[RMDB]
Chemical mapping of a 207-nucleotide RNA with DMS and 2A3.
The 2A3 profile rests on 756 reads.
Values cover nucleotides 27 to 156.
For DMS the reverse transcriptase was MarathonRT.
2A3 adducts were read by reverse transcription with SuperScript II with manganese.
Conditions: 150 mM KOAc, 10 mM MgCl2 and 150 mM bicine (pH 8.5), 24 C.

RNA sequence: GGGAACGACUCGAGUAGAGUCGAAAAUCGGCACUGUUUCAGCAGGAAUCGGAGGCCAUGUCAUCUGCAGCAAUGUCGAAGAAGAACAAGGGGAAGAAGAUGGCGGAUCCCAAUGAGACGUCUAAGCUACUUGCUGCCAAAAUCUCUCAGCUGGAGCAAAGUGGAUCUGAUUCGUCAGAUCCACUUUAAAAGAAACAACAACAACAAC
Reactivity to DMS in 0.01 (KOAc 150mM, MgCl2 10mM, bicine 150mM(pH8.5), 24C), signal-to-noise 1, nucleotides 027 to 156: u010c000g050g000c060a090c010u000g030u010u010u010c050a060g020c070a030g040g030a150a030u000c090g020g030a100g000g060c050c010a120u000g010u000c040a150u000c010u000g090c020a190g060c000a090a030u000g000u010c020g030a090a120g000a040a030g010a030a120c030a120a040g030g000g000g030a030a100g030a060a030g010a100u010g010g000c020g010g000a120u010c030c010c040a090a130u000g010a090g010a020c030g010u010c030u000a070a140g000c020u000a120c020u000u000g010c010u010g030c000c080a040a030a110a040u010c020u000c000u000c030a070g050c090u010g030g010a160g030c070
Reactivity to 2A3 in 0.01 (KOAc 150mM, MgCl2 10mM, bicine 150mM(pH8.5), 24C), signal-to-noise 1, nucleotides 027 to 156: u080c040g020g070c020a000c060u070g000u010u130u090c030a060g020c000a030g010g130a040a080u030c050g010g050a020g070g000c040c020a040u010g090u000c060a100u010c020u060g000c010a020g000c010a050a070u060g010u040c060g110a110a080g030a060a000g030a060a000c020a050a070g000g010g020g000a120a030g010a070a000g000a040u040g040g010c000g030g010a080u060c040c010c030a020a050u130g000a020g000a000c010g000u000c010u090a100a010g010c000u070a100c030u180u040g010c030u010g050c010c000a020a050a040a120u010c040u000c000u020c020a010g000c030u020g000g020a020g000c030